Structure probing data (2A3 and DMS) for a 177-nucleotide construct. Conditions: 150 mM KOAc, 10 mM MgCl2 and 150 mM bicine (pH 8.5), 24 C.
RNA sequence: GGGAACGACUCGAGUAGAGUCGAAAAGAUAUGGACGAUACCAGACAUGAUCCUUCGGAAACGAACGGAUCAACAGCUGGUGAUCGUCCUAAGUCAAAAGGGAAUCAUCGUUCGCGAUGAUUCCCAACACUCCCUUGAUCUUCGGAUCAAGGGAGUGAAAAGAAACAACAACAACAAC
Reactivity to 2A3 in 0.01 (KOAc 150mM, MgCl2 10mM, bicine 150mM(pH8.5), 24C), signal-to-noise 2, nucleotides 027 to 126: g010a010u050a020u090g000g000a000c000g010a010u000a020c010c020a000g190a230c140a230u050g000a010u000c010c000u020u010c010g000g030a020a000a050c010g000a020a020c180g040g000a000u010c010a010a030c080a010g170c010u010g010g040u130g100a020u000c000g020u020c000c000u010a010a010g020u020c020a020a020a050a110g030g000g000a000a000u000c000a020u000c010g090u130u110c300g000c000g250a000u000g000a000u000u000c000c000c000a000a000
Reactivity to DMS in 0.01 (KOAc 150mM, MgCl2 10mM, bicine 150mM(pH8.5), 24C), signal-to-noise 2, nucleotides 027 to 126: g010a010u000a300u000g000g020a010c010g020a030u000a020c000c000a030g000a140c140a260u000g000a000u000c000c000u000u000c020g040g010a080a060a200c010g010a020a000c190g020g000a000u000c010a010a040c300a140g010c000u000g000g000u000g000a010u000c000g010u000c000c000u010a010a080g010u020c030a030a040a130a150g000g010g000a010a020u000c000a000u000c000g000u000u010c220g020c000g010a010u000g000a010u010u000c000c000c000a000a030
For 2A3 the reverse transcriptase was SuperScript II with manganese.